[RMDB]
RNA sequence: GGGAACGACUCGAGUAGAGUCGAAAAUUGUUUGGGGGCUGGCCGAUGUUAUUACAAGUGUUACUCGUAAUGGUUAUCGUGGAUUACGCAACCGGCUUAAUGGCCGCCGGAACGCAGGGAGGUCUCAAAAGCGAGGUCGGCCUAAAGGGGAUUGCCCUGUUAAGAUGAUCUUCGGAUCAUCUUAACAAAAAGAAACAACAACAACAAC
Reactivity to 2A3 in 0.01 (KOAc 150mM, MgCl2 10mM, bicine 150mM(pH8.5), 24C), signal-to-noise 2, nucleotides 027 to 156: u100u060g020u030u000u110g030g000g000g000g000c000u000g010g000c020c020g060a060u050g030u110u130a120u080u030a030c030a060a110g010u110g090u290u080a110c040u030c050g030u030a050a050u050g050g030u090u100a040u090c040g010u110g020g050a080u050u070a010c080g000c030a030a040c010c010g010g000c020u050u070a110a040u110g090g050c030c000g000c000c000g000g010a130a020c000g000c060a000g020g000g020a080g000g040u080c030u020c040a100a190a010a030g030c030g020a000g010g020u010c000g000g010c000c010u040a030a000a020g020g040g000g010a070u060u160g040c000c040c000
Reactivity to DMS in 0.01 (KOAc 150mM, MgCl2 10mM, bicine 150mM(pH8.5), 24C), signal-to-noise 2, nucleotides 027 to 156: u000u000g000u000u000u010g040g010g020g030g060c030u000g020g020c010c040g000a030u010g020u010u000a060u020u010a060c010a030a020g010u000g040u010u020a070c030u010c000g000u000a020a040u010g020g000u020u010a080u020c020g030u010g020g020a170u000u010a050c030g010c030a060a100c020c000g020g020c020u010u000a060a150u000g010g010c000c040g000c020c040g000g030a200a080c100g010c070a130g020g010g010a110g010g010u010c030u000c050a080a050a080a130g040c030g020a070g020g030u000c010g030g040c040c040u000a030a050a080g020g020g020g010a200u000u010g030c010c040c040